[RMDB]
RNA sequence: GGGAACGACUCGAGUAGAGUCGAAAAGAUAUGGACCUUGAACUACAGAGUGUUGCUCGAAGAACUCGGAAACGAGGGAGAGCAACGCUCUGCAAGGUCCUAAGUCAAAGCUGAGUUCGCUCAGCAAGGUAUAUAUAGUCUUCGGACUAUAUAUACCAAAAGAAACAACAACAACAAC
Reactivity to 2A3 in 0.01 (KOAc 150mM, MgCl2 10mM, bicine 150mM(pH8.5), 24C), signal-to-noise 9, nucleotides 027 to 126: g040a030u090a050u160g010g000a000c000c000u000u000g030a090a070c100u160a050c300a010g010a000g000u010g000u000u000g000c000u010c020g230a300a060g020a050a020c000u000c010g020g050a070a060a030c020g000a010g000g000g020a040g000a000g000c000a000a000c000g000c000u000c000u000g000c000a000a000g000g000u000c000c000u000a020a010g000u010c030a060a070a040g000c000u000g000a000g020u080u180c260g100c110u010c000a000g000c020a010a030
Reactivity to DMS in 0.01 (KOAc 150mM, MgCl2 10mM, bicine 150mM(pH8.5), 24C), signal-to-noise 9, nucleotides 027 to 126: g000a040u000a300u000g000g000a010c000c000u010u000g010a090a050c100u020a300c010a000g000a020g020u010g010u000u000g010c000u000c000g000a090a120g000a110a210c000u000c000g000g000a120a070a160c010g010a010g000g000g000a060g000a020g010c000a000a010c000g010c000u000c000u000g000c000a000a010g020g010u000c000c000u000a010a080g010u000c040a090a090a120g010c000u000g000a020g020u000u010c260g010c010u000c000a010g010c010a040a020

Description:
Chemical mapping of a 177-nucleotide RNA with 2A3 and DMS. The RNA was probed in 150 mM KOAc, 10 mM MgCl2 and 150 mM bicine (pH 8.5) at 24 C. It was measured as part of the RMDB library TTRDEL. The DMS profile rests on 18,226 reads.